[RMDB]
RNA sequence: GGGAACGACUCGAGUAGAGUCGAAAAUGCAUUAAAAGAAUUUCACACUCAAAAAGGAAGGAUCAAGUUUUUCACAGACAGUGAAGCCGUCCAGAUGCAAUUGAAGUUAGUAGGUGUCACAGUAAAUGAAUCAAGGUCACUUGAAAAUAAAUAUGACUGAUUAUGCACAAUUCGUUGUGCAUAAUCAAAAAGAAACAACAACAACAAC
Reactivity to DMS in 0.01 (KOAc 150mM, MgCl2 10mM, bicine 150mM(pH8.5), 24C), signal-to-noise 2, nucleotides 027 to 156: u000g010c010a090u000u010a100a040a140a140g010a140a110u000u010u000c030a150c020a040c020u000c040a070a090a060a180a100g040g000a070a050g020g030a150u000c050a070a100g040u010u010u000u000u010c090a080c060a120g010a080c090a130g040u000g000a030a090g000c000c050g030u010c010c010a150g000a060u000g020c050a050a070u000u000g010a050a110g010u000u000a080g000u010a090g000g000u000g020u010c030a050c040a060g000u010a070a040a120u010g000a100a130u000c040a050a090g030g000u010c110a040c060u010u020g010a050a050a030a120u010a050a040a070u010a080u000g020a080c080
Reactivity to 2A3 in 0.01 (KOAc 150mM, MgCl2 10mM, bicine 150mM(pH8.5), 24C), signal-to-noise 2, nucleotides 027 to 156: u040g010c000a010u110u180a080a100a080a010g100a050a070u110u110u090c080a060c020a070c060u200c070a060a070a010a060a030g060g030a050a020g000g000a010u040c060a040a110g050u080u110u060u020u050c040a050c000a040g100a080c010a010g020u010g010a050a000g060c010c000g050u000c000c000a010g030a100u040g010c000a020a040u020u110g090a030a010g030u030u050a050g050u050a000g000g020u040g020u040c000a010c040a070g060u130a000a050a100u110g030a010a020u040c060a050a000g000g040u020c020a010c130u040u050g040a010a050a030a050u150a010a050a030u140a070u010g060a000c020